An RNA of 177 nucleotides, treated with DMS and 2A3 and read out base by base. 2A3 adducts were read by reverse transcription with SuperScript II with manganese. Source: RMDB library OK2TRN, as collected in RNAgym. The RNA was probed in 150 mM KOAc, 10 mM MgCl2 and 150 mM bicine (pH 8.5) at 24 C. For 2A3, 18,992 sequencing reads were counted.
RNA sequence: GGGAACGACUCGAGUAGAGUCGAAAAGUUUACCACUAGACUCAAAGCAAUUUCUUGAUUUUCCUCUAAUACUAGCAGCACUAGAGGGCAUGACUAGUACCAAAUAACAGAAGUUACUCUUCUGUAGCUAAACAACAUAGUUCGCUAUGUUGUUUAGAAAAGAAACAACAACAACAAC
Reactivity to DMS in 0.01 (KOAc 150mM, MgCl2 10mM, bicine 150mM(pH8.5), 24C), signal-to-noise 9, nucleotides 027 to 126: g010u000u010u000a110c050c030a140c060u000a050g000a160c090u010c070a070a080a100g010c120a060a070u000u000u000c050u000u000g000a100u000u000u000u000c010c010u000c120u000a060a130u010a020c030u000a050g010c070a090g010c020a060c060u010a060g010a100g010g000g020c080a050u000g000a080c030u000a030g010u000a100c220c100a050a070a080u010a100a030c000a010g000a010a010g000u000u000a090c280u010c020u000u000c000u000g000u000a090g000
Reactivity to 2A3 in 0.01 (KOAc 150mM, MgCl2 10mM, bicine 150mM(pH8.5), 24C), signal-to-noise 9, nucleotides 027 to 126: g010u010u070u120a140c010c020a020c020u020a040g050a050c020u020c130a080a090a040g020c020a090a190u070u180u050c050u070u120g080a160u080u040u070u050c010c020u020c050u140a130a090u040a130c030u020a020g030c020a000g000c000a020c050u050a040g040a130g130g040g000c020a080u030g050a130c010u010a010g020u000a030c010c050a100a100a090u140a100a010c000a000g010a020a000g040u090u100a080c080u050c010u200u000c000u000g000u000a010g030